Overview:
Conditions: 150 mM KOAc, 10 mM MgCl2 and 150 mM bicine (pH 8.5), 24 C. Structure probing data (DMS and 2A3) for a 177-nucleotide construct. Values cover nucleotides 27 to 126.

[RMDB]
RNA sequence: GGGAACGACUCGAGUAGAGUCGAAAAAGACGCCCCGCGCCCCCAGCCGGCCCAGGCCAUAGCCGGCAGCGUGGAGGCCGACCGUGCUGAGGGUGAACCCCGCGAAAAACUCGGCGGCGCUCAGGCCAAAUAUUACGUUUUUCGAAACGUAAUAUUUAAAAGAAACAACAACAACAAC
Reactivity to DMS in 0.01 (KOAc 150mM, MgCl2 10mM, bicine 150mM(pH8.5), 24C), signal-to-noise 6, nucleotides 027 to 126: a120g020a170c110g020c020c010c010c050g030c060g000c020c010c020c020c040a090g020c010c000g000g000c000c040c120a140g030g010c020c020a090u000a280g010c020c020g000g000c090a040g010c040g020u000g010g010a210g000g010c010c010g020a060c030c010g010u010g010c020u010g010a040g000g000g010u000g000a090a160c050c010c010c060g020c070g010a060a080a080a110a100c100u000c030g020g020c070g020g000c030g010c080u010c080a100g010g000c070c070
Reactivity to 2A3 in 0.01 (KOAc 150mM, MgCl2 10mM, bicine 150mM(pH8.5), 24C), signal-to-noise 2, nucleotides 027 to 126: a000g030a010c030g040c020c020c020c010g030c000g000c020c000c000c000c030a000g000c000c010g040g000c070c090c060a070g030g000c020c000a040u090a050g010c030c030g100g000c020a000g010c050g030u070g030g140a060g010g000c010c000g030a040c000c010g040u090g010c020u010g010a040g030g010g010u020g000a010a040c000c010c000c020g040c040g100a200a070a020a020a030c030u030c040g070g000c100g000g000c030g040c030u010c030a010g080g000c010c020